[RMDB]
RNA sequence: GGGAACGACUCGAGUAGAGUCGAAAAAGAAUUCUUGUUUCAUGCUUCACGGAGACACUAGUGCUGAACCUCUGUACGGCGACGCAGCACACCCGACACAUCCUUGAGUCUCUUUUUCAGCGUCGGUCAUCCUCCCUCAGUUCGCUGAGGGAGGAUGAAAAGAAACAACAACAACAAC
Reactivity to 2A3 in 0.01 (KOAc 150mM, MgCl2 10mM, bicine 150mM(pH8.5), 24C), signal-to-noise 2, nucleotides 027 to 126: a000g120a120a150u090u050c080u070u030g060u060u000u010c000a030u070g010c020u030u000c040a020c050g050g030a000g000a030c030a020c060u080a050g030u030g070c040u050g000a080a030c000c030u060c060u060g050u060a060c120g020g010c030g070a080c070g010c000a000g050c010a000c000a010c000c000c000g020a000c000a000c030a070u000c050c000u040u080g030a020g050u000c030u030c000u170u020u000u010u140c030a000g060c000g050u010c030g030g040u000

The data come from the RNA Mapping Database (RMDB), library OK1LIB. An RNA of 177 nucleotides, treated with 2A3 and read out base by base. 2A3 adducts were read by reverse transcription with SuperScript II with manganese. For 2A3, 1,106 sequencing reads were counted. Conditions: 150 mM KOAc, 10 mM MgCl2 and 150 mM bicine (pH 8.5), 24 C.